RNA sequence: GGGAACGACUCGAGUAGAGUCGAAAAUUAAUAGAUUUCGAUCUAUUAAACAGGCGGAGGCUCGCUCCUAGCGACCGGCGCUAGCGCGCACGGUACAGCGAAUACUGAAUCCCUUCGGGGAUUCAAACAGACAUUCGUAAUUCGUUACGAAUGUCUGAAAAGAAACAACAACAACAAC
Reactivity to DMS in 0.01 (KOAc 150mM, MgCl2 10mM, bicine 150mM(pH8.5), 24C), signal-to-noise 2, nucleotides 027 to 126: u000u020a020a000u000a030g000a030u000u000u000c130g000a030u000c000u000a010u000u000a000a030a140c170a110g000g030c040g000g010a110g000g010c040u000c030g000c020u000c010c020u000a060g040c040g000a070c010c010g010g020c000g010c000u000a120g010c300g030c030g000c020a070c010g010g010u000a040c060a130g040c020g000a090a070u010a070c150u000g010a010a000u000c000c000c000u000u010c180g020g010g000g000a000u000u000c000a020a100a210
Reactivity to 2A3 in 0.01 (KOAc 150mM, MgCl2 10mM, bicine 150mM(pH8.5), 24C), signal-to-noise 2, nucleotides 027 to 126: u050u010a000a010u000a010g030a000u040u110u080c160g030a000u020c000u010a010u010u030a040a070a050c080a030g020g110c090g070g050a040g010g120c090u030c080g010c000u000c020c020u000a020g000c020g020a010c010c000g020g010c020g000c020u070a110g050c060g010c010g000c140a130c120g040g020u100a150c030a020g020c010g010a040a030u140a230c100u060g010a020a000u000c000c020c000u010u030c140g080g030g010g010a000u000u030c000a010a000a010